Structure probing data (2A3) for a 170-nucleotide construct. It was measured as part of the RMDB library 15KLIB. For 2A3, 4,965 sequencing reads were counted.
[RMDB]
RNA sequence: GGGAACGACUCGAGUAGAGUCGAAAAGGACCCCACUCUACAGGGUCCGCGUUCCAUCCUUUCUUACCUGAUGGCCGGCAUGGUCCCAGCCUCCUCGCUGGCGCCGGCUGGGCAACAUUCCGAGGGGCACCUGCUGCGUUCGCGCAGCAGAAAAGAAACAACAACAACAAC
Reactivity to 2A3 in 0.01 (KOAc 150mM, MgCl2 10mM, bicine 150mM(pH8.5), 24C), signal-to-noise 4, nucleotides 027 to 129: g010g000a000c000c000c000c000a130c070u090c020u050a020c030a070g000g020g000u010c010c000g020c020g000u020u010c020c010a080u130c030c010u080u120u100c020u120u150a210c020c030u120g090a180u140g090g050c000c030g030g000c040a070u120g040g010u050c040c040c000a030g010c000c000u080c000c030u030c090g030c040u040g050g000c040g010c010c040g030g020c020u040g010g010g010c030a100a030c030a090u130u000c020c020g010a010g000g000g030g010c020a020c020